[RMDB]
RNA sequence: GGGAACGACUCGAGUAGAGUCGAAAACUUGCCCCCACUAAUGCUUAUAUGCGCACUACACAUACUGAUAUUGGUGUCUACAUUAGUAUGUCACUUGUAUUAGUCAUUGUAGUGAAGAGAUUGUACACACGCUCAGCCUUCGGGCUGAGCAAAAGAAACAACAACAACAAC
Reactivity to 2A3 in 0.01 (KOAc 150mM, MgCl2 10mM, bicine 150mM(pH8.5), 24C), signal-to-noise 3, nucleotides 027 to 129: c000u020u150g030c000c000c000c000c000a000c040u150a030a020u020g030c000u150u120a010u050a010u300g020c000g000c000a000c000u000a000c000a000c010a010u070a010c000u000g000a020u030a000u020u040g000g000u070g000u000c040u000a010c000a030u090u090a150g010u000a050u140g000u040c000a000c010u040u020g000u000a000u010u010a030g000u030c110a010u010u020g000u000a000g010u000g050a060a000g030a010g000a030u090u130g080u100a020c030a000c000a030c070
Reactivity to DMS in 0.01 (KOAc 150mM, MgCl2 10mM, bicine 150mM(pH8.5), 24C), signal-to-noise 3, nucleotides 027 to 129: c030u020u070g010c040c000c010c020c040a230c170u060a030a140u000g040c070u080u020a080u000a110u030g100c070g040c030a000c000u010a000c000a060c300a100u060a080c000u120g000a020u000a020u010u050g000g000u000g000u020c020u010a020c020a230u020u030a130g050u020a020u070g050u030c000a060c000u000u000g030u020a020u020u020a010g000u010c220a070u010u040g040u010a000g080u000g020a170a000g050a140g060a110u000u040g000u070a090c130a120c080a080c100
Chemical mapping of a 170-nucleotide RNA with 2A3 and DMS. Values are in units of 0.01, from 0 to 300, in steps of 10. For DMS the reverse transcriptase was MarathonRT. Reactivities are given for positions 27 through 129. It was measured as part of the RMDB library 15KLIB.